[RMDB]
RNA sequence: GGGAACGACUCGAGUAGAGUCGAAAAAGUCUUGUGUGAUGACUCAUAGAUCGCAAAGGCCUUACAGCUUUGCCCCGUGGCCCGGGACCUGCAGGUGGUUGAUUACACAAGGGCCGUGAAGACUGGACAGUGUACCCCAUUUCGAUGGGGUACACUGAAAAGAAACAACAACAACAAC
Reactivity to DMS in 0.01 (KOAc 150mM, MgCl2 10mM, bicine 150mM(pH8.5), 24C), signal-to-noise 1, nucleotides 027 to 126: a060g010u010c050u030u000g020u000g020u000g000a050u010g010a120c110u000c070a090u000a110g020a040u010c080g010c000a040a060a060g020g010c010c030u000u020a090c200a100g010c110u000u000u000g000c030c030c020c010g020u010g000g000c090c080c030g010g090g010a030c030c080u000g010c130a130g030g030u010g030g060u000u000g000a120u000u000a070c020a000c070a090a060g020g000g040c000c000g000u000g000a090a150g020a100c050u010g000g010a300

Background:
This 177-nucleotide RNA was probed chemically with DMS. Values cover nucleotides 27 to 126. The DMS profile rests on 892 reads. It was measured as part of the RMDB library OK2TRN. High DMS reactivity at an A or C suggests that its Watson-Crick edge is free. DMS adducts were read by reverse transcription with MarathonRT.